This 177-nucleotide RNA was probed chemically with DMS. Conditions: 150 mM KOAc, 10 mM MgCl2 and 150 mM bicine (pH 8.5), 24 C. Source: RMDB library OK2TRN, as collected in RNAgym. The DMS profile rests on 1,631 reads.
[RMDB]
RNA sequence: GGGAACGACUCGAGUAGAGUCGAAAAGGGCUGGCCCAGCUUGACUUGUGCAGGGUGAGCAGGUGGGCACUGACUGGGGCCCUCCCAACAGGACAGAGGCAUUAGCUGGGACCGCUGCUCCUGUAGCAGGAGCUGCGGGUUUCGACCCGCAGCUCCUAAAAGAAACAACAACAACAAC
Reactivity to DMS in 0.01 (KOAc 150mM, MgCl2 10mM, bicine 150mM(pH8.5), 24C), signal-to-noise 1, nucleotides 027 to 126: g000g020g010c000u000g030g010c020c000c000a070g000c020u010u000g010a080c090u010u010g000u010g010c050a080g010g010g050u010g000a100g010c120a060g010g000u000g010g010g010c020a070c070u010g020a090c170u000g020g010g000g000c020c000c010u000c000c020c010a110a050c080a050g000g010a050c060a050g000a050g000g010c070a100u000u000a070g020c000u000g010g000g000a170c010c030g000c010u000g010c140u000c000c020u010g000u010a110g000c230